[RMDB]
RNA sequence: GGGAACGACUCGAGUAGAGUCGAAAACUUCGGGGGCACCCGGACUGUUGAUGUGCACGUGCGGCGGUUGCGGGCCAAACUCGGCCCCGAGCAUGAAGCGCUGAUCGGCACGGUGCGCAACGUCGGACGCAACGUAUUAAUUCGUUAAUACGUUGCGAAAAGAAACAACAACAACAAC
Reactivity to DMS in 0.01 (KOAc 150mM, MgCl2 10mM, bicine 150mM(pH8.5), 24C), signal-to-noise 6, nucleotides 027 to 126: c060u010u000c040g020g000g010g010g010c300a110c060c000c010g030g000a040c090u010g030u010u010g000a090u010g030u000g010c020a080c020g030u000g010c010g010g000c020g010g010u000u010g020c140g030g010g020c010c020a070a120a140c250u010c170g010g010c000c000c010c050g010a070g020c060a090u010g000a100a160g010c020g000c010u000g010a070u000c040g020g020c030a040c030g020g010u000g000c000g010c000a040a060c060g000u000c020g000g010a300
Structure probing data (DMS) for a 177-nucleotide construct. DMS adducts were read by reverse transcription with MarathonRT. Values are in units of 0.01, from 0 to 300, in steps of 10. It was measured as part of the RMDB library OK2TRN.